About this RNA: An RNA of 170 nucleotides, treated with 2A3 and DMS and read out base by base. The data come from the RNA Mapping Database (RMDB), library 15KLIB. Values are in units of 0.01, from 0 to 300, in steps of 10. DMS adducts were read by reverse transcription with MarathonRT. The DMS profile rests on 115,115 reads.
RNA sequence: GGGAACGACUCGAGUAGAGUCGAAAAUGGAGAUACCAUGCCGACCCGAAGAAGGAAAGGAGGACACGGACGACAAACCGUAGGUACUCUUGCCCUUUAUUGUUGGGUGCACCCUGGGACCCAGUAAACACAGAGUGGUUCGCCACUCUGAAAAGAAACAACAACAACAAC
Reactivity to 2A3 in 0.01 (KOAc 150mM, MgCl2 10mM, bicine 150mM(pH8.5), 24C), signal-to-noise 9, nucleotides 027 to 129: u110g030g000a120g020a080u130a150c010c020a020u060g030c000c030g070a080c000c000c010g040a050a040g020a010a010g020g010a030a030a010g030g010a010g010g000a000c010a010c020g020g050a070c040g040a040c150a040a100a020c010c000g020u050a100g020g050u180a050c010u000c000u020u040g020c000c000c000u040u070u040a200u060u110g110u030u050g010g010g000u030g000c010a060c010c010c020u030g010g020g020a030c000c000c010a020g040u130a020a100a010c130a000
Reactivity to DMS in 0.01 (KOAc 150mM, MgCl2 10mM, bicine 150mM(pH8.5), 24C), signal-to-noise 9, nucleotides 027 to 129: u020g030g000a080g000a150u060a070c040c020a030u040g020c060c050g000a120c020c010c020g010a070a070g000a010a010g000g000a060a190a030g000g000a040g010g010a090c090a030c020g020g030a040c030g040a100c300a090a080a080c010c000g020u000a050g020g030u040a110c050u000c010u010u020g000c300c000c020u000u010u020a070u030u010g030u040u030g010g000g030u010g030c060a070c030c000c020u000g010g010g000a050c040c010c000a050g030u030a050a070a080c170a090